RNA sequence: GGGAACGACUCGAGUAGAGUCGAAAAGAUAUGGAGAUAUCCCAGGGAGAUCCUCGGAAACGAGAGAUCAUCGAUCUGGCGGUCUCCUAAGUCAAAACGGUGGGUUAACUUCGGUUAACCCACCGAAGAGUGUGAUUAACUUCGGUUAAUCACACUCAAAAGAAACAACAACAACAAC
Reactivity to 2A3 in 0.01 (KOAc 150mM, MgCl2 10mM, bicine 150mM(pH8.5), 24C), signal-to-noise 1, nucleotides 027 to 126: g010a020u060a040u190g000g030a010g000a020u040a150u190c000c020c000a000g060g080g000a010g000a010u000c000c000u010c000g010g100a030a020a030c020g000a010g060a030g000a000u030c020a120u230c000g070a130u030c000u020g070g010c130g090g030u000c000u000c000c000u000a090a030g070u110c040a020a020a110a110c020g000g010u000g000g000g000u010u010a020a000c000u050u080c220g040g000u000u000a010a000c030c020c000a020c030c000g030a020a010
Reactivity to DMS in 0.01 (KOAc 150mM, MgCl2 10mM, bicine 150mM(pH8.5), 24C), signal-to-noise 1, nucleotides 027 to 126: g000a040u000a300u010g000g020a040g020a030u000a050u010c210c010c020a050g000g000g010a070g010a010u000c010c000u000c020g000g000a100a040a210c000g000a000g030a100g000a050u000c020a110u000c110g000a080u010c000u000g010g010c200g000g000u000c000u010c000c010u000a030a050g000u000c050a040a060a150a150c050g000g040u000g010g000g020u010u010a000a000c000u000u010c140g040g000u000u000a000a020c000c000c000a000c000c000g010a010a010